[RMDB]
Structure probing data (DMS and 2A3) for a 177-nucleotide construct. The reactions ran in a buffer of 150 mM KOAc, 10 mM MgCl2 and 150 mM bicine (pH 8.5), at 24 C. 2A3 adducts were read by reverse transcription with SuperScript II with manganese. For DMS, 12,531 sequencing reads were counted.
RNA sequence: GGGAACGACUCGAGUAGAGUCGAAAAGACCAUCCAACUGUUGCAGGGAUGACAAUAUUGGUGCUGACAUAAUUAAGUGUCAGAUGAUGUGCUGGACUGUUGGGUAUGUACCUCUCGUACGCUAUCCGAUCUAUAAAACGUUCGCGUUUUAUAGAUCAAAAGAAACAACAACAACAAC
Reactivity to DMS in 0.01 (KOAc 150mM, MgCl2 10mM, bicine 150mM(pH8.5), 24C), signal-to-noise 7, nucleotides 027 to 126: g000a210c100c050a070u000c010c010a030a050c030u010g010u000u000g000c020a040g000g010g020a120u010g010a130c120a080a080u000a090u000u000g030g020u010g010c000u000g000a010c010a020u000a080a140u010u010a100a130g020u000g010u000c000a010g010a060u010g000a080u000g020u000g010c030u000g000g000a040c040u000g000u000u000g000g010g000u010a050u010g010u000a030c040c100u010c140u010c100g020u010a030c040g000c170u010a050u010c120c100
Reactivity to 2A3 in 0.01 (KOAc 150mM, MgCl2 10mM, bicine 150mM(pH8.5), 24C), signal-to-noise 9, nucleotides 027 to 126: g050a020c000c020a000u010c010c010a010a010c020u040g050u130u190g160c030a030g030g050g190a180u180g080a050c060a090a080u120a090u210u200g150g010u230g060c000u000g000a000c000a010u160a120a140u300u170a300a090g020u000g010u010c000a000g020a020u080g020a020u080g020u060g050c010u010g000g020a020c010u010g000u020u010g020g000g020u050a100u120g010u020a040c000c030u100c020u030c090g020u040a030c020g000c060u030a070u100c040c060

For 2A3, 16,683 sequencing reads were counted.